[RMDB]
RNA sequence: GGGAACGACUCGAGUAGAGUCGAAAAUCUGGAAUAUGGCGGUUAUAGCACACUGUUAUGAGUUUCGUGACCUCAAAGUUGCGGCAUUUAAGGGGGAUGACUCUGUUGUGCUUUGCAGCGAUUACCGACCGAUGGUCAGGUUCGCCUGACCAUCGGUAAAAGAAACAACAACAACAAC
Reactivity to DMS in 0.01 (KOAc 150mM, MgCl2 10mM, bicine 150mM(pH8.5), 24C), signal-to-noise 1, nucleotides 027 to 126: u030c060u000g050g000a150a110u010a030u000g030g000c020g000g000u000u000a000u010a050g030c030a040c020a030c080u000g000u040u000a050u010g040a040g010u000u000u020c040g030u000g010a150c040c010u030c240a080a090a090g010u000u000g010c120g010g000c170a080u000u000u000a070a080g010g000g000g000g000a170u000g000a040c000u000c070u000g010u000u000g010u000g000c000u000u000u000g000c050a020g000c030g000a090u010u010a160c050c010g000
Chemical mapping of a 177-nucleotide RNA with DMS. The data come from the RNA Mapping Database (RMDB), library OK2TRN. Reactivities are given for positions 27 through 126.